[RMDB]
RNA sequence: GGGAACGACUCGAGUAGAGUCGAAAAUUGAAGGUAAAACAGCCUGUGGGUGAAACACACCCACAGGGCCCAAUGGGCGCUAGCACUCUGGUAUCACGGUACCUUUGUGCGCCUGUUUUACCGAAGGACGGCGGGUUGUUCGCAACCCGCAAAAGAAACAACAACAACAAC
Reactivity to 2A3 in 0.01 (KOAc 150mM, MgCl2 10mM, bicine 150mM(pH8.5), 24C), signal-to-noise 2, nucleotides 027 to 129: u150u150g050a110a010g030g000u020a020a020a000a000c000a010g000c000c010u000g000u000g000g000g000u000g020a050a010a000c070a010c000a000c090c000c000a010c010a000g020g000g000c020c000c000a000a030u300g000g000g000c010g010c100u140a050g000c010a000c000u000c000u010g020g000u000a000u000c010a040c170g110g000u000a000c020c010u000u000u000g020u000g020c010g000c000c000u000g020u000u000u000u000a010c000c000g020a000a000g060g020a020c000g070
An RNA of 170 nucleotides, treated with 2A3 and read out base by base. Values are in units of 0.01, from 0 to 300, in steps of 10. 2A3 adducts were read by reverse transcription with SuperScript II with manganese. The RNA was probed in 150 mM KOAc, 10 mM MgCl2 and 150 mM bicine (pH 8.5) at 24 C.